Source: RMDB library OK2TRN, as collected in RNAgym. This 177-nucleotide RNA was probed chemically with 2A3 and DMS. Values cover nucleotides 27 to 126. The RNA was probed in 150 mM KOAc, 10 mM MgCl2 and 150 mM bicine (pH 8.5) at 24 C. The 2A3 profile rests on 4,229 reads.
RNA sequence: GGGAACGACUCGAGUAGAGUCGAAAAGGUGACGAUAAUGUCCGCAUCGAGGUGCCCACCGGAUUUGAGUGCAAUACCGGUGGCGUCGAAGUGGUCGAUAUGGUCGGUGACCACCUCGGCGCGGCCGGGCAAAUGGUCAGUUCGCUGACCAUUUGCCAAAAGAAACAACAACAACAAC
Reactivity to 2A3 in 0.01 (KOAc 150mM, MgCl2 10mM, bicine 150mM(pH8.5), 24C), signal-to-noise 3, nucleotides 027 to 126: g090g030u110g030a050c050g030a130u090a240a100u300g070u000c020c020g010c010a040u050c030g020a040g000g070u100g040c040c010c000a010c010c000g030g030a050u060u050u240g140a160g100u180g060c030a070a070u030a270c000c010g040g000u020g140g000c000g000u000c000g000a010a010g030u050g000g030u020c030g040a040u040a140u300g120g010u110c100g010g070u100g000a000c000c020a000c000c010u000c000g010g000c010g000c000g020g000c010c010g010
Reactivity to DMS in 0.01 (KOAc 150mM, MgCl2 10mM, bicine 150mM(pH8.5), 24C), signal-to-noise 3, nucleotides 027 to 126: g020g020u010g010a070c080g010a070u010a140a090u010g010u010c040c040g000c050a030u000c020g010a090g010g020u000g000c070c010c020a110c040c000g000g000a140u000u010u010g000a110g020u000g010c080a090a060u010a190c030c010g000g020u000g000g020c000g010u000c000g010a020a070g040u010g000g000u000c010g010a060u020a070u010g010g010u010c070g010g000u000g000a010c000c010a020c000c020u000c010g000g000c020g030c000g000g000c010c010g000